[RMDB]
RNA sequence: GGGAACGACUCGAGUAGAGUCGAAAAGAUAUGGACGACCUGAGCUUUUGACGAUCGAGGGUCGGAAACGACCUUAACGAUCGAUAAGCUCUGGUCGUCCUAAGUCAAACCCGCCUUCGGGCGGGAAGGGUAUUGAAAGGUUCGCCUUUCAAUACCCAAAAGAAACAACAACAACAAC
Reactivity to 2A3 in 0.01 (KOAc 150mM, MgCl2 10mM, bicine 150mM(pH8.5), 24C), signal-to-noise 1, nucleotides 027 to 126: g020a000u040a070u280g040g000a000c000g010a000c000c010u010g000a000g040c010u150u200u260u270g250a170c050g010a000u010c010g010a050g000g040g000u020c000g000g000a020a020a000c000g010a000c000c000u040u100a300a140c050g000a000u010c010g000a010u050a010a000g020c000u000c000u010g000g000u000c000g000u010c000c000u000a020a000g000u020c000a000a010a050c010c000c010g010c010c010u100u130c300g120g030g050c030g000g040g000a010a110
Reactivity to DMS in 0.01 (KOAc 150mM, MgCl2 10mM, bicine 150mM(pH8.5), 24C), signal-to-noise 1, nucleotides 027 to 126: g010a070u000a300u010g000g000a000c000g010a020c010c010u000g000a000g020c010u000u000u040u000g000a240c200g020a000u000c000g000a100g020g000g010u000c040g000g030a030a120a160c000g040a010c000c000u000u010a110a150c000g020a030u000c000g030a130u000a000a010g010c010u010c000u010g020g050u000c020g020u000c000c010u000a010a080g000u010c020a080a140a230c000c000c000g000c000c000u000u010c230g010g050g020c000g000g000g030a010a050